An RNA of 177 nucleotides, treated with DMS and 2A3 and read out base by base.
Values cover nucleotides 27 to 126.
For DMS, 1,682 sequencing reads were counted.
For 2A3 the reverse transcriptase was SuperScript II with manganese.
In probing experiments dimethyl sulfate is read out at A N1 and C N3, which are open when not base-paired.
The reactions ran in a buffer of 150 mM KOAc, 10 mM MgCl2 and 150 mM bicine (pH 8.5), at 24 C.
It was measured as part of the RMDB library OK1LIB.
RNA sequence: GGGAACGACUCGAGUAGAGUCGAAAAACGAAUUCCCCGGCCGGGUGCUGCUAGCCGAAGCCAAUCAGUGGCCGGGCGAUGUCGUCGAAUAUUUCGGUGAUCCCAACACCGGUGGCGACGAGUGCCAGAUGCGAAUCCAUUUCGAUGGAUUCGCAUCAAAAGAAACAACAACAACAAC
Reactivity to DMS in 0.01 (KOAc 150mM, MgCl2 10mM, bicine 150mM(pH8.5), 24C), signal-to-noise 2, nucleotides 027 to 126: a130c160g020a200a210u030u000c050c010c000c010g000g000c110c040g010g000g020u030g050c020u000g030c040u020a190g000c070c200g030a170a110g000c000c040a160a070u070c120a090g120u020g020g000c050c020g000g050g000c100g030a010u030g080u000c000g010u000c020g010a030a040u010a160u050u000u030c010g000g020u000g000a060u000c010c030c010a080a290c010a000c000c050g000g000u040g000g000c000g010a010c010g000a040g000u060g000c000c070a150
Reactivity to 2A3 in 0.01 (KOAc 150mM, MgCl2 10mM, bicine 150mM(pH8.5), 24C), signal-to-noise 3, nucleotides 027 to 126: a010c070g040a030a020u130u070c000c000c000c000g020g010c000c000g120g010g050u110g010c060u030g000c050u100a050g000c040c050g090a070a000g030c060c020a080a110u130c020a030g220u090g070g030c000c000g000g000g000c060g010a060u120g030u000c010g010u000c010g060a160a130u210a250u080u190u160c020g000g020u020g010a100u080c000c000c010a050a000c010a000c000c010g000g030u050g010g000c010g000a060c030g030a070g020u170g070c050c040a020